[RMDB]
RNA sequence: GGGAACGACUCGAGUAGAGUCGAAAAUAGGCGUUUAUUUAAGGCUUUAUUACAUCGCACAAUUGCGUUAUAAACCCUCCAAUCAUAUUCAGCAAUUUCAACUAAUAUAUCGUCAGGUAAAAUUUGUCGUUUAUUGUGCUCCAUUAUAUAACAAAAAACGGAAUUAAUACUUCGGUAUUAAUUCCGUAAAAGAAACAACAACAACAAC
Reactivity to 2A3 in 0.01 (KOAc 150mM, MgCl2 10mM, bicine 150mM(pH8.5), 24C), signal-to-noise 3, nucleotides 027 to 156: u080a040g060g000c050g040u060u100u050a130u070u210u110a080a000g000g000c000u020u050u080a040u040u050a030c090a070u100c030g040c000a020c030a120a120u060u060g010c020g020u010u040a080u130a050a110a040c010c000c040u040c070c090a070a030u020c020a030u060a030u190u090c040a050g020c030a020a050u100u170u080c010a060a020c000u080a070a090u050a050u010a010u180c060g040u060c040a000g050g000u080a050a130a040a120u020u030u080g050u050c010g000u000u150u050a010u040u040g000u060g010c010u030c020c000a010u080u060a040u030a030u150a090a060c100a000a080a190a200a030
Reactivity to DMS in 0.01 (KOAc 150mM, MgCl2 10mM, bicine 150mM(pH8.5), 24C), signal-to-noise 1, nucleotides 027 to 156: u000a040g000g020c010g040u030u000u000a050u030u000u010a090a070g020g010c060u010u000u000a020u010u000a100c130a080u010c050g010c030a120c100a080a120u000u010g010c030g030u000u000a080u030a040a090a120c110c000c010u000c080c040a060a080u010c110a060u000a000u000u000c080a040g010c070a070a100u000u000u000c040a000a050c040u000a060a030u000a010u010a080u010c080g000u010c060a000g010g030u010a040a060a080a130u000u000u020g020u000c000g000u000u020u000a040u000u000g000u000g020c030u000c010c020a090u000u010a100u000a080u010a110a190c050a010a050a040a100a110

The data come from the RNA Mapping Database (RMDB), library OK3TST. This 207-nucleotide RNA was probed chemically with 2A3 and DMS. The reactions ran in a buffer of 150 mM KOAc, 10 mM MgCl2 and 150 mM bicine (pH 8.5), at 24 C. For 2A3, 1,260 sequencing reads were counted.